[RMDB]
RNA sequence: GGGAACGACUCGAGUAGAGUCGAAAAAAUGCUCCACACAGGUUUAAAAAACUUGAAUACGUGGCCAUCCAACUGAAUCAGUGAUGAAACACCAGCAGCUAUGGUUGAUAGGGAUAUCGGCAGUUAGUUUUCAACUUCGUUUCGACGAAGUUGAAAAAAAAGAAACAACAACAACAAC
Reactivity to 2A3 in 0.01 (KOAc 150mM, MgCl2 10mM, bicine 150mM(pH8.5), 24C), signal-to-noise 2, nucleotides 027 to 126: a000a000u080g000c020u020c000c000a030c000a020c000a060g000g060u020u020u160a060a110a000a000a000a000c030u040u030g040a210a010u160a080c090g000u010g020g000c050c000a010u020c000c000a040a020c030u050g010a000a100u210c040a030g010u010g070a110u040g000a050a080a000c000a040c040c050a000g030c020a000g000c040u170a120u170g130g020u010u090g000a040u050a030g030g030g000a050u030a050u030c000g010g000c000a030g000u040u100a050g000
Reactivity to DMS in 0.01 (KOAc 150mM, MgCl2 10mM, bicine 150mM(pH8.5), 24C), signal-to-noise 3, nucleotides 027 to 126: a100a050u020g000c060u050c000c000a000c120a140c070a020g010g000u000u000u000a000a090a060a060a110a010c000u000u010g030a130a090u060a060c090g000u010g020g000c300c030a050u000c010c010a070a090c080u020g010a050a110u020c020a040g000u020g010a030u030g000a070a030a090c130a090c070c040a070g000c060a080g000c040u010a060u020g040g030u000u010g000a060u010a050g000g040g020a050u000a060u000c020g030g000c060a030g000u040u010a050g020
This 177-nucleotide RNA was probed chemically with 2A3 and DMS. 2A3 adducts were read by reverse transcription with SuperScript II with manganese. For 2A3, 943 sequencing reads were counted. It was measured as part of the RMDB library RFM100. Conditions: 150 mM KOAc, 10 mM MgCl2 and 150 mM bicine (pH 8.5), 24 C.